[RMDB]
RNA sequence: GGGAACGACUCGAGUAGAGUCGAAAAGAUAUGGACCGCCAUUCUAAGUGCAACAGCUAUCAUCGGAAACGAUGAUAGACAUGCACUGAUGCGGUCCUAAGUCAAAACGGGAGCUUCGGCUCCCGAAGACGUUAGUGCUGUUCGCAGCACUAACGUCAAAAGAAACAACAACAACAAC
Reactivity to DMS in 0.01 (KOAc 150mM, MgCl2 10mM, bicine 150mM(pH8.5), 24C), signal-to-noise 2, nucleotides 027 to 126: g000a080u000a300u000g040g000a000c020c020g040c050c300a100u000u000c190u020a080a060g040u010g000c000a000a140c300a170g010c020u000a000u010c000a000u000c000g010g000a110a080a300c050g000a010u000g000a010u020a010g000a030c100a240u010g010c000a020c000u000g000a030u000g010c000g000g000u020c000c000u000a000a070g000u030c040a110a050a110a170c050g000g000g000a020g000c010u000u020c280g030g030c010u000c000c000c010g000a000a000
Reactivity to 2A3 in 0.01 (KOAc 150mM, MgCl2 10mM, bicine 150mM(pH8.5), 24C), signal-to-noise 1, nucleotides 027 to 126: g000a020u070a010u100g020g000a000c000c010g080c130c030a130u230u200c130u270a270a050g000u000g030c100a290a090c020a230g110c010u000a000u020c000a000u000c010g000g010a050a040a070c000g010a010u020g000a000u010a000g000a020c000a090u110g030c020a000c050u010g010a000u060g020c000g010g030u000c010c010u010a000a040g030u030c010a000a000a000a130c000g000g010g020a010g020c010u070u100c290g300g000c000u040c010c000c000g000a000a020